Chemical mapping of a 207-nucleotide RNA with DMS and 2A3. The 2A3 profile rests on 874 reads. 2A3 adducts were read by reverse transcription with SuperScript II with manganese. Source: RMDB library OK3TST, as collected in RNAgym. Conditions: 150 mM KOAc, 10 mM MgCl2 and 150 mM bicine (pH 8.5), 24 C.

RNA sequence: GGGAACGACUCGAGUAGAGUCGAAAAGUGAUAGAGCCAGGAUUCAAAUCAAGGACCGUCUGACUCCAGGGUUUCCAUUCUAUCUUGCCAGAUGUUAGGGUAAGGUCCCCAAUAGUACAUCAGGGCAGAGAAUGCUGAGUUCUGGACAUUUGCAGUAGUUUUAAUAGGACUUCGGUCCUAUUAAAACAAAAGAAACAACAACAACAAC
Reactivity to DMS in 0.01 (KOAc 150mM, MgCl2 10mM, bicine 150mM(pH8.5), 24C), signal-to-noise 1, nucleotides 027 to 156: g030u010g020a060u000a100g050a080g070c000c020a000g020g010a050u020u010c010a070a130a260u000c100a130a280g030g030a070c050c040g010u000c010u020g010a120c050u010c070c040a110g010g000g000u000u000u020c130c010a070u000u000c020u000a050u000c020u010u000g040c010c030a250g010a080u000g010u010u010a110g020g040g010u000a070a070g030g000u000c040c010c010c020a080a230u000a100g020u000a070c010a030u010c030a120g040g040g040c010a030g010a040g000a020a010u000g030c050u000g010a090g040u000u000c000u000g010g010a050c040a040u010u000u000g010c070a100g000u000a080
Reactivity to 2A3 in 0.01 (KOAc 150mM, MgCl2 10mM, bicine 150mM(pH8.5), 24C), signal-to-noise 2, nucleotides 027 to 156: g040u050g030a070u100a140g170a000g080c020c010a030g030g010a030u070u050c060a120a060a200u090c060a090a130g020g020a020c050c000g170u150c110u060g080a150c060u070c130c020a060g010g000g050u010u090u090c030c000a020u010u020c000u040a160u040c020u050u140g000c000c000a000g000a000u020g010u000u080a050g000g010g030u090a160a200g120g020u160c020c000c000c010a070a060u130a090g110u070a040c000a000u020c050a060g000g020g000c000a000g000a000g000a020a010u060g020c100u020g040a000g010u000u000c000u000g000g020a020c020a060u070u150u160g000c020a020g070u300a040